[RMDB]
RNA sequence: GGGAACGACUCGAGUAGAGUCGAAAAGCCGAAGAGUUCGCUCUUCGGCGACGAAUUUGGCGUAGAUGAGAGACUACAGUACUAGCCAUCCCAGAUGUACAAAUAAGCAUUGCUUCGGCAAUGCUAAUCUAGGUGGAACUUUCGAGUUCCACCUAGAAAAAGAAACAACAACAACAAC
Reactivity to 2A3 in 0.01 (KOAc 150mM, MgCl2 10mM, bicine 150mM(pH8.5), 24C), signal-to-noise 1, nucleotides 027 to 126: g020c010c000g010a000a000g000a010g000u080u130c130g030c120u000c000u000u010c000g000g120c010g000a010c020g110a080a150u180u110u110g000g000c110g000u010a020g040a110u090g050a070g010a000g040a110c020u050a050c050a020g020u040a000c000u000a020g000c000c010a040u000c020c000c010a000g010a120u050g020u000a020c020a020a130a020u300a170a030g000c000a000u000u030g010c000u010u070c230g060g040c000a000a000u010g000c010u010a000a000
Reactivity to DMS in 0.01 (KOAc 150mM, MgCl2 10mM, bicine 150mM(pH8.5), 24C), signal-to-noise 1, nucleotides 027 to 126: g010c000c000g010a030a020g000a030g010u020u000c190g040c030u000c030u000u010c000g000g000c000g010a010c120g000a110a170u000u000u000g000g010c000g000u000a020g000a100u000g000a170g030a170g000a110c060u000a030c060a140g020u030a000c020u000a140g000c000c000a070u000c010c010c020a180g000a070u000g000u000a040c070a100a100a150u010a100a060g000c000a000u000u000g010c010u010u000c230g020g000c000a000a000u000g000c000u000a010a040